Structure probing data (2A3 and DMS) for a 177-nucleotide construct. For DMS, 2,576 sequencing reads were counted. For 2A3 the reverse transcriptase was SuperScript II with manganese.
[RMDB]
RNA sequence: GGGAACGACUCGAGUAGAGUCGAAAAAGGGCUGGAUUCGUCCAGCCCUGCACAUUCGUACGCAACGUAGCGUACGUCAUUACGCAAAUGACGUAAAGCGUAGAACCACGGACUUCGGUCCGUGGAAUCGGUUUAUCACAUUCGUGUGAUAAACCGAAAAAGAAACAACAACAACAAC
Reactivity to 2A3 in 0.01 (KOAc 150mM, MgCl2 10mM, bicine 150mM(pH8.5), 24C), signal-to-noise 3, nucleotides 027 to 126: a000g000g010g000c000u000g000g010a000u040u020c130g050u010c030c000a000g000c000c000c000u000g020c010a020c000a090u140u140c020g080u050a020c000g030c050a170a070c230g190u200a070g050c020g030u020a020c000g000u010c000a070u040u140a020c040g000c070a050a050a180u090g080a030c030g030u090a090a030a050g030c010g020u030a050g020a070a050c000c000a000c000g010g000a000c000u050u030c220g070g000u000c010c000g000u010g000g030a000a030
Reactivity to DMS in 0.01 (KOAc 150mM, MgCl2 10mM, bicine 150mM(pH8.5), 24C), signal-to-noise 3, nucleotides 027 to 126: a010g000g010g040c000u000g000g000a020u000u030c190g010u000c000c010a010g010c000c000c010u000g000c120a080c170a180u000u010c030g010u020a010c010g010c010a120a100c270g010u030a100g010c050g010u000a000c010g000u000c130a050u010u000a020c130g000c160a110a070a040u000g000a040c080g010u000a040a050a130g000c010g010u000a060g010a080a140c010c000a010c000g000g000a020c000u000u000c170g020g020u000c010c000g010u000g010g000a020a020
Overview
For DMS the reverse transcriptase was MarathonRT. Reactivities are rounded to 0.1 and cut off at 0 and 3. The 2A3 profile rests on 3,071 reads. The RNA was probed in 150 mM KOAc, 10 mM MgCl2 and 150 mM bicine (pH 8.5) at 24 C.